[RMDB]
RNA sequence: GGGAACGACUCGAGUAGAGUCGAAAACAAAAUACGGACAUUAGCUUCACUUUCUCUAGACACAAUAACAUCGUACAAAACUGUCUUAAUGGAUGAUAUUAAUUCUAAAGUUGCUUUCCUGUCAUCAGUUGAUUCACGUAUUCGUACGUGAAUCAACAAAAGAAACAACAACAACAAC
Reactivity to DMS in 0.01 (KOAc 150mM, MgCl2 10mM, bicine 150mM(pH8.5), 24C), signal-to-noise 1, nucleotides 027 to 126: c020a080a200a120a060u080a010c040g000g000a090c060a050u000u000a030g000c000u050u040c050a040c000u000u000u000c000u000c060u080a100g000a050c100a140c090a080a000u020a000a150c000a000u020c000g000u000a030c120a100a060a090a070c250u000g040u000c010u000u000a040a150u000g000g000a030u000g000a050u000a000u000u000a130a080u000u000c060u000a020a060a050g050u000u010g000c150u000u000u000c060c000u000g040u000c060a060u040c030a050
Reactivity to 2A3 in 0.01 (KOAc 150mM, MgCl2 10mM, bicine 150mM(pH8.5), 24C), signal-to-noise 4, nucleotides 027 to 126: c030a020a030a030a080u150a070c050g010g040a010c060a110u150u130a010g010c000u010u040c040a020c030u050u060u000c060u020c010u050a040g020a040c000a000c040a150a110u110a170a030c010a030u080c090g070u110a040c030a010a110a050a050c040u070g040u080c010u090u110a100a070u100g110g030a030u020g070a010u040a050u160u120a070a070u130u020c080u110a120a030a030g010u010u010g030c000u050u030u030c010c010u050g140u110c030a110u050c050a070